RNA sequence: GGGAACGACUCGAGUAGAGUCGAAAAGGGGACAGGGAAGAACGGUAAUCAUCAGUGCCCAUCGCCUUUCGGCACUGACGGAAGCCAGUGAAAUUAUUGUGAUGCAGCACGGACAUAUCGCCCAGCACCAUACCGGCCGUUUCGACGGCCGGUAUGGAAAAGAAACAACAACAACAAC
Reactivity to DMS in 0.01 (KOAc 150mM, MgCl2 10mM, bicine 150mM(pH8.5), 24C), signal-to-noise 1, nucleotides 027 to 126: g010g010g000g000a120c100a050g030g050g010a130a090g000a050a050c150g000g000u000a060a170u000c050a090u000c010a030g010u010g010c010c010c160a090u010c210g030c110c110u010u050u020c300g000g000c000a030c000u000g000a000c050g030g050a110a050g010c020c000a120g010u010g010a120a080a040u000u000a090u010u000g030u000g000a110u030g030c070a040g000c010a080c100g030g030a090c100a130u000a020u000c120g000c060c030c000a110g010c200a050

Annotation:
Source: RMDB library OK2TST, as collected in RNAgym. Chemical mapping of a 177-nucleotide RNA with DMS. For DMS, 626 sequencing reads were counted. Values cover nucleotides 27 to 126.